[RMDB]
RNA sequence: GGGAACGACUCGAGUAGAGUCGAAAAGUGACUUUCUUUCAACAGCUAACAAUUGUUGUUACUGCCUAAUGUUUUUAGGGUAUUUUAAAAAAGGGCGAUAAAAAACGAUUGGGGGAUGAGACAUGAAGGCAUUACGUAAUUUCGAUUACGUAAUGCCAAAAGAAACAACAACAACAAC
Reactivity to 2A3 in 0.01 (KOAc 150mM, MgCl2 10mM, bicine 150mM(pH8.5), 24C), signal-to-noise 4, nucleotides 027 to 126: g070u060g030a030c010u020u080u070c020u010u080u060c060a050a050c000a070g040c020u080a020a040c030a070a120u070u020g000u060u000g000u000u070a040c030u120g020c000c000u090a100a080u120g150u110u100u010u010u090a050g000g020g070u110a200u010u140u060u110a020a110a000a000a000a020g010g000g010c010g010a010u150a060a080a020a000a000a000c070g000a080u080u070g000g020g010g000g010a020u040g010a030g040a020c050a030u110g050a090a020
Reactivity to DMS in 0.01 (KOAc 150mM, MgCl2 10mM, bicine 150mM(pH8.5), 24C), signal-to-noise 3, nucleotides 027 to 126: g010u010g000a100c140u000u010u000c060u000u020u000c070a060a070c090a090g010c060u000a070a070c100a050a090u010u010g010u000u000g000u020u000a050c060u010g010c070c000u020a060a080u030g010u000u000u010u010u010a020g010g020g010u000a020u020u010u000u050a000a020a030a030a040a080g000g020g000c020g010a100u010a010a040a060a050a030a050c030g000a030u010u010g000g010g000g010g000a040u010g000a050g010a060c090a070u020g010a100a050

Background
The record gives the reactivity of an RNA of 177 nucleotides to 2A3 and DMS. Source: RMDB libraries RFM100 and RFMREP, as collected in RNAgym. The reactions ran in a buffer of 150 mM KOAc, 10 mM MgCl2 and 150 mM bicine (pH 8.5), at 24 C.